[RMDB]
RNA sequence: GGGAACGACUCGAGUAGAGUCGAAAAGAGCUUAGGGGAAUAUUGUCAUGGUAGAACAUGACAUGUAAUUCCUAAGCUUGGUUGGGAACCUAUCGCAUGUUCUACUAUGUGAACAUAUUCCAACAUAGAUAGUAUAGAUUUUCGAGUCUGUGCUAUCAAAAGAAACAACAACAACAAC
Reactivity to DMS in 0.01 (KOAc 150mM, MgCl2 10mM, bicine 150mM(pH8.5), 24C), signal-to-noise 9, nucleotides 027 to 126: g010a050g010c020u000u000a030g010g010g000g000a060a030u020a020u010u010g010u000c000a010u000g000g010u010a130g010a090a130c000a000u000g010a020c020a010u010g000u010a100a160u020u010c000c010u000a000a020g000c040u010u010g000g000u000u000g000g000g000a040a060c070c040u010a090u010c130g020c040a010u000g000u010u020c090u020a070c090u020a020u010g000u020g000a040a060c130a040u010a070u000u010c000c010a050a040c050a110u030a090
Reactivity to 2A3 in 0.01 (KOAc 150mM, MgCl2 10mM, bicine 150mM(pH8.5), 24C), signal-to-noise 9, nucleotides 027 to 126: g040a010g010c030u050u050a030g030g020g010g090a070a070u120a090u120u130g030u030c000a000u010g010g010u040a020g020a070a010c000a000u000g020a010c000a010u010g000u020a030a060u040u010c000c000u000a000a000g000c000u010u030g050g000u010u010g000g000g010a020a030c010c010u030a050u080c040g000c020a000u010g020u040u070c020u040a070c020u050a020u070g040u010g040a030a000c010a020u060a020u030u000c000c000a000a000c010a030u070a030